[RMDB]
RNA sequence: GGGAACGACUCGAGUAGAGUCGAAAAGAUAUGGAACCGUCUGUAGACGUACAUCGGAAACGAUGUAUACGUCGCAGAUAGACGGGUUCCUAAGUCAAAGUAGUUACCGCUUCGGCGGUAACUACAAUCCCUUGACAAUCUUCGGAUUGUCAAGGGAAAAAGAAACAACAACAACAAC
Reactivity to DMS in 0.01 (KOAc 150mM, MgCl2 10mM, bicine 150mM(pH8.5), 24C), signal-to-noise 1, nucleotides 027 to 126: g010a010u000a010u000g000g000a000a090c000c000g000u000c000u000g040u000a020g000a010c010g030u000a030c000a000u000c000g030g010a010a000a030c000g030a000u000g000u000a070u010a050c120g050u000c000g030c230a190g000a010u000a000g000a000c000g020g010g010u010u000c000c000u010a000a060g020u000c010a140a150a200g000u000a000g000u000u000a000c000c000g000c000u000u010c300g020g010c010g010g000u000a000a000c000u000a000c000a040a150